[RMDB]
RNA sequence: GGGAACGACUCGAGUAGAGUCGAAAACUGCGCUGAGCCCUUCUCCCCCAGCUUGCCUGUGUCCUAGGGAAUUGGAAGGUCAUCCUUCACAGGAUCGUGUGGAAGUCCGGCUCGGGGCGGAAGCAUUAUAAACCUUAGACGUUCGCGUCUAAGGUAACGCAUCAGCAAUGUUCGCAUUGCUGAUGCGAAAAGAAACAACAACAACAAC
Reactivity to 2A3 in 0.01 (KOAc 150mM, MgCl2 10mM, bicine 150mM(pH8.5), 24C), signal-to-noise 1, nucleotides 027 to 156: c020u000g030c290g070c120u040g020a030g010c080c000c050u060u000c070u140c000c080c000c110c000a000g020c000u000u040g020c030c010u000g000u000g010u100c060c060u040a000g030g060g000a050a230u120u170g060g030a150a000g160g010u190c000a090u010c000c000u060u050c040a020c000a020g010g020a070u070c090g010u010g010u110g100g040a030a030g000u000c040c000g000g000c030u020c000g000g000g020g000c000g000g000a010a010g090c000a000u010u060a120u130a150a020a000c000c000u000u000a000g000a000c000g000u000u040c200g000c060g120u010c000u090a000a000g000g000u010a000a000
This 207-nucleotide RNA was probed chemically with 2A3. It was measured as part of the RMDB library M2RFPK. The reactions ran in a buffer of 150 mM KOAc, 10 mM MgCl2 and 150 mM bicine (pH 8.5), at 24 C. 2A3 adducts were read by reverse transcription with SuperScript II with manganese.